[RMDB]
RNA sequence: GGGAACGACUCGAGUAGAGUCGAAAACAUUCCGACGAUGUUUCCCAGCCAGGGGUUUUCAUCCUCAAGUUUCUUGAUCUUCUUGUUGAUUCGCCGGAGCUCCUUCUCGGCUAUUCGCUUUUUCUUCGUGCGGAUAUGUUCGCAUAUCCGAAAAGAAACAACAACAACAAC
Reactivity to 2A3 in 0.01 (KOAc 150mM, MgCl2 10mM, bicine 150mM(pH8.5), 24C), signal-to-noise 9, nucleotides 027 to 129: c010a040u090u090c050c040g030a050c070g020a010u030g020u010u030u020c020c010c010a000g050c060c050a050g010g030g010g010u030u060u090u140c040a080u070c000c000u040c040a060a060g040u030u060u010c010u040u090g060a090u020c000u070u000c010u070u120g070u090u090g060a080u080u050c030g010c030c010g070g020a030g010c020u040c020c000u110u050c060u030c020g010g000c010u020a050u030u070c040g040c030u070u060u020u010u030c020u040u050c040g120u090g110
Reactivity to DMS in 0.01 (KOAc 150mM, MgCl2 10mM, bicine 150mM(pH8.5), 24C), signal-to-noise 8, nucleotides 027 to 129: c060a100u040u030c030c060g030a130c120g000a060u010g020u000u000u000c000c030c020a080g060c080c080a110g020g000g010g010u000u010u020u010c100a100u010c000c060u000c070a080a100g040u010u010u000c000u050u020g030a050u020c050u030u020c040u030u050g040u040u010g030a120u000u040c060g060c090c010g000g000a050g000c100u000c060c070u030u020c050u020c040g000g020c090u050a060u040u040c070g020c070u000u000u000u000u000c030u000u000c070g040u060g010
The record gives the reactivity of an RNA of 170 nucleotides to 2A3 and DMS.
Reactivities are given for positions 27 through 129.
For DMS the reverse transcriptase was MarathonRT.
2A3 adducts were read by reverse transcription with SuperScript II with manganese.
For DMS, 43,197 sequencing reads were counted.